[RMDB]
RNA sequence: GGGAACGACUCGAGUAGAGUCGAAAAGAUAUGGAUAUAUCAGUAGCUAAGGUCAACUGGAGUCGGGAAGUCGGAAACGACUUUCGACGAUGAAAGUUGACCUUAGCUACUGAGUAUAUCCUAAGUCCCUUAAAACGAGGUUCGCCUCGUUUUAAGGAAAAGAAACAACAACAACAAC
Reactivity to DMS in 0.01 (KOAc 150mM, MgCl2 10mM, bicine 150mM(pH8.5), 24C), signal-to-noise 2, nucleotides 027 to 126: g000a140u020a270u010g000g000a020u000a030u000a000u000c000a000g000u000a000g010c000u000a010a010g010g010u000c010a010a010c010u020g020g030a300g000u000c000g030g010g000a000a020g020u010c000g010g000a150a120a220c000g030a010c010u000u000u000c000g010a180c010g010a010u010g010a300a180a010g000u000u000g000a010c000c010u000u000a000g000c000u000a000c030u010g000a010g020u000a010u000a000u000c000c000u000a070a120g010u010c030
Structure probing data (DMS) for a 177-nucleotide construct. The reactions ran in a buffer of 150 mM KOAc, 10 mM MgCl2 and 150 mM bicine (pH 8.5), at 24 C. DMS (dimethyl sulfate) methylates the pairing face of unpaired adenines and cytosines.